[RMDB]
Chemical mapping of a 207-nucleotide RNA with DMS and 2A3.
The reactions ran in a buffer of 150 mM KOAc, 10 mM MgCl2 and 150 mM bicine (pH 8.5), at 24 C.
It was measured as part of the RMDB library OK3TST.
For DMS, 16,506 sequencing reads were counted.
The 2A3 profile rests on 6,559 reads.
Values cover nucleotides 27 to 156.
For 2A3 the reverse transcriptase was SuperScript II with manganese.

RNA sequence: GGGAACGACUCGAGUAGAGUCGAAAAUGUCACCCAGGCUGGAGUGCGAUGGCGUGAUCUCGGCUCACUGCAACCUCUGCCUCCUGGAUUCAAGUGAUUCUCCUGUCUCAGCCUCCCAAGUAGCUGGGAUUACAGGCACCUGCCAUCACACCUGGCAAUAAUCAUAAUCAUUCGUGAUUAUGAUUAUAAAAGAAACAACAACAACAAC
Reactivity to DMS in 0.01 (KOAc 150mM, MgCl2 10mM, bicine 150mM(pH8.5), 24C), signal-to-noise 3, nucleotides 027 to 156: u000g000u000c030a150c000c010c020a140g020g020c010u000g010g010a100g030u000g030c010g010a040u010g020g010c010g030u000g000a050u000c030u000c060g020g010c030u010c040a050c040u000g010c030a050a050c020c010u000c020u000g020c000c000u000c010c000u000g020g010a080u000u010c040a080a090g000u000g010a100u000u000c020u000c010c020u000g020u000c020u000c010a060g020c010c020u000c030c040c060a050a110g010u000a030g030c010u000g010g020g000a050u000u000a030c020a060g010g010c010a060c070c050u000g000c010c010a050u000c030a040c050a070c020c030u000g030g020c050a150
Reactivity to 2A3 in 0.01 (KOAc 150mM, MgCl2 10mM, bicine 150mM(pH8.5), 24C), signal-to-noise 5, nucleotides 027 to 156: u150g020u050c040a050c050c000c000a030g110g000c010u020g020g030a230g050u040g000c040g010a030u010g010g000c040g020u010g030a050u020c040u030c060g010g010c030u020c040a050c030u080g040c050a040a090c010c030u070c050u070g030c010c020u030c010c000u050g040g020a080u080u080c080a130a040g030u030g080a070u100u020c030u030c050c000u020g030u020c010u000c030a010g000c010c000u080c010c020c010a070a030g020u060a010g040c000u010g010g030g000a010u020u080a040c040a020g060g000c010a040c030c050u060g000c000c000a000u020c010a010c000a000c020c000u000g010g000c000a000